[RMDB]
Conditions: 150 mM KOAc, 10 mM MgCl2 and 150 mM bicine (pH 8.5), 24 C. An RNA of 177 nucleotides, treated with DMS and 2A3 and read out base by base. For 2A3 the reverse transcriptase was SuperScript II with manganese. The DMS profile rests on 2,618 reads. DMS adducts were read by reverse transcription with MarathonRT. It was measured as part of the RMDB library TTRDEL. For 2A3, 7,202 sequencing reads were counted.
RNA sequence: GGGAACGACUCGAGUAGAGUCGAAAAGAUAUGGAGCAAGAGCGAUAAGCGUGCAUCGGAAACGAUGCAACGCUUUUGACGCUCAACCUCCUAAGUCAAAAGCGUUUGCCCUUCGGGGCAAACGCAACAGUAUAAGUGACUUCGGUCACUUAUACUGAAAAGAAACAACAACAACAAC
Reactivity to DMS in 0.01 (KOAc 150mM, MgCl2 10mM, bicine 150mM(pH8.5), 24C), signal-to-noise 2, nucleotides 027 to 126: g010a010u000a300u010g000g000a000g020c050a050a300g000a000g010c000g040a110u000a000a010g030c000g090u010g010c000a000u000c000g010g010a070a090a090c000g010a000u000g010c020a020a010c000g000c000u000u000u000u000g010a140c050g020c000u000c010a040a250c300c000u010c000c010u000a030a120g000u010c020a050a040a050a070g000c000g000u000u000u000g020c000c010c000u000u000c170g040g000g000g020c000a000a000a000c000g030c020a010a030
Reactivity to 2A3 in 0.01 (KOAc 150mM, MgCl2 10mM, bicine 150mM(pH8.5), 24C), signal-to-noise 2, nucleotides 027 to 126: g010a010u040a010u110g000g000a000g020c060a140a110g030a000g000c030g060a140u070a290a020g010c010g000u000g000c010a000u000c010g010g010a080a010a000c010g020a000u010g000c030a020a010c000g000c000u010u010u020u040g010a010c000g000c000u000c000a030a010c000c000u000c000c000u030a070a010g030u010c010a030a060a020a090g000c000g020u010u020u000g000c000c000c000u030u060c260g050g000g060g060c040a000a010a000c020g000c000a000a000